[RMDB]
Background:
The record gives the reactivity of an RNA of 177 nucleotides to DMS and 2A3. For 2A3, 88,032 sequencing reads were counted. 2A3 adducts were read by reverse transcription with SuperScript II with manganese. Values cover nucleotides 27 to 126. The reactions ran in a buffer of 150 mM KOAc, 10 mM MgCl2 and 150 mM bicine (pH 8.5), at 24 C. It was measured as part of the RMDB library OK2TST.
RNA sequence: GGGAACGACUCGAGUAGAGUCGAAAAGCGAUGACGAAGAAGCCACGUAACCCCGCCGACUACGUGAUCGGCGACGAUGUCGAGGUGUCUGACGUCGAUCUCAAGCAAGAGGAGGUCUAUGUCGAUGAGUAUGAUGAUAAUUCGUUAUCAUCAUACUAAAAGAAACAACAACAACAAC
Reactivity to DMS in 0.01 (KOAc 150mM, MgCl2 10mM, bicine 150mM(pH8.5), 24C), signal-to-noise 9, nucleotides 027 to 126: g010c040g010a070u010g010a040c030g010a300a070g010a090a130g010c020c010a050c030g020u000a110a080c070c070c040c020g010c020c010g010a040c030u010a110c230g020u000g000a090u000c010g010g000c010g000a030c110g000a070u000g010u010c030g000a080g010g010u000g010u000c020u000g010a080c030g020u000c030g000a030u000c020u000c030a070a120g010c150a070a100g010a100g010g000a030g010g000u000c030u000a070u010g010u000c020g000a110u010g000
Reactivity to 2A3 in 0.01 (KOAc 150mM, MgCl2 10mM, bicine 150mM(pH8.5), 24C), signal-to-noise 9, nucleotides 027 to 126: g040c030g130a150u060g020a020c030g010a040a080g060a070a010g090c010c010a020c020g020u050a040a090c010c010c000c010g000c000c000g010a020c010u150a090c150g220u140g100a250u010c000g000g040c000g000a020c030g050a050u120g050u130c030g030a040g020g060u080g020u040c060u090g040a060c010g000u010c010g010a030u000c010u010c030a110a140g040c050a080a040g030a050g220g010a010g020g000u010c030u070a100u080g040u020c020g020a050u090g000